An RNA of 177 nucleotides, treated with DMS and 2A3 and read out base by base. The RNA was probed in 150 mM KOAc, 10 mM MgCl2 and 150 mM bicine (pH 8.5) at 24 C.
[RMDB]
RNA sequence: GGGAACGACUCGAGUAGAGUCGAAAAUGAAAGAGUUUCCUUUAACCUAUAUGGAAGCAAAGAUCAAGAAUACAACCUUCCCAUAUGGUUGACUUAAUUAUUCCCUAGGUUCCUGCAAGCUAAAAAAUAAUAAGUGAAUCUUCGGAUUCACUUAUUAAAAAGAAACAACAACAACAAC
Reactivity to DMS in 0.01 (KOAc 150mM, MgCl2 10mM, bicine 150mM(pH8.5), 24C), signal-to-noise 2, nucleotides 027 to 126: u010g010a060a070a230g000a170g020u000u000u000c040c070u000u020u000a060a090c050c040u000a040u000a040u000g010g000a060a040g010c070a070a130a180g000a030u000c060a090a100g010a160a050u000a070c040a030a160c230c000u000u000c090c030c050a080u000a020u000g020g000u010u000g000a050c040u000u000a050a130u000u000a100u000u000c000c000c010u000a110g000g000u000u000c010c030u000g010c120a050a100g010c110u010a000a020a060a060a060a080
Reactivity to 2A3 in 0.01 (KOAc 150mM, MgCl2 10mM, bicine 150mM(pH8.5), 24C), signal-to-noise 1, nucleotides 027 to 126: u180g000a010a020a060g070a020g000u030u040u050c020c000u000u110u060a000a010c000c020u070a000u010a010u180g020g040a000a030g010c010a070a010a070g090a100u130c090a090a080g080a300a010u100a070c010a040a060c030c000u000u060c020c060c010a020u040a020u040g050g000u020u070g000a020c010u000u040a050a050u060u070a050u080u050c010c000c000u020a050g050g080u000u010c000c000u030g030c060a050a050g010c010u190a300a200a010a000a000a040
Reactivities are given for positions 27 through 126.